[RMDB]
RNA sequence: GGGAACGACUCGAGUAGAGUCGAAAAUCGGCCAGCCGACCGGCAGGUGCACACCGCAAUGAGAACGCUGACCGAGUUCAACCGCGGCCGUGUCGGGAUGAUGGGUGCGGUGGUCACGGUGCUCGUCCGAAAACGAAUUUUUCGAAAUUCGUUUUCGAAAAGAAACAACAACAACAAC
Reactivity to DMS in 0.01 (KOAc 150mM, MgCl2 10mM, bicine 150mM(pH8.5), 24C), signal-to-noise 6, nucleotides 027 to 126: u030c030g000g000c000c000a080g000c040c030g000a130c040c050g010g010c050a090g010g030u010g020c080a100c090a090c030c020g010c060a120a100u040g000a190g000a070a100c100g010c080u010g000a110c040c030g010a120g010u030u020c130a100a120c040c040g020c060g000g010c010c020g000u020g000u010c020g000g020g000a120u030g000a080u010g000g000g010u000g010c020g020g030u000g010g010u010c040a040c050g000g010u010g000c010u000c060g000u020c080
Reactivity to 2A3 in 0.01 (KOAc 150mM, MgCl2 10mM, bicine 150mM(pH8.5), 24C), signal-to-noise 9, nucleotides 027 to 126: u080c010g030g000c010c010a020g020c020c010g030a040c010c020g020g010c040a070g050g040u110g030c060a020c010a010c040c020g000c040a040a110u220g020a060g010a160a010c030g010c090u040g020a050c010c040g020a030g030u090u140c050a070a040c010c020g010c020g040g010c000c030g060u070g040u070c020g030g040g030a070u180g020a030u070g040g070g060u090g020c010g010g020u050g010g000u060c030a010c040g030g010u060g000c020u030c040g060u020c040
Description
Structure probing data (DMS and 2A3) for a 177-nucleotide construct. For 2A3, 20,509 sequencing reads were counted.